[RMDB]
Source information:
Chemical mapping of a 207-nucleotide RNA with 2A3. The RNA was probed in 150 mM KOAc, 10 mM MgCl2 and 150 mM bicine (pH 8.5) at 24 C. The 2A3 profile rests on 892 reads. Reactivities are rounded to 0.1 and cut off at 0 and 3.
RNA sequence: GGGAACGACUCGAGUAGAGUCGAAAAACGGUGCGGAAGUUCGCGCUUCCGUGAAACGCGAAAAUCGGACGGUGGCUGCAAGUCGAAUCGCAAAACCGCGGCAAGUGGAGUUAGCGAGAGGAGGCUGAAACCAUCCAACACUUCGGUGUUGGAUGAAGUUAACCGAUGAGUUCGCUCAUCGGUUAACAAAAGAAACAACAACAACAAC
Reactivity to 2A3 in 0.01 (KOAc 150mM, MgCl2 10mM, bicine 150mM(pH8.5), 24C), signal-to-noise 1, nucleotides 027 to 156: a000c030g030g010u080g010c000g000g030a020a000g020u160u290c070g000c050g020c020u000u000c010c000g040u060g050a070a100a000c050g010c020g080a030a070a000a060u110c050g000g020a000c040g020g000u060g040g040c040u050g010c090a020a000g010u020c000g020a030a050u020c020g000c030a010a000a020a090c010c030g000c040g020g100c120a160a000g010u030g020g020a050g020u120u090a010g020c040g000a020g000a010g010g040a120g020g020c020u000g020a110a000a000c030c000a010u000c000c000a000a020c000a000c010u030u120c220g050g000u000g000u020u000g000g010a000u000g000a000a010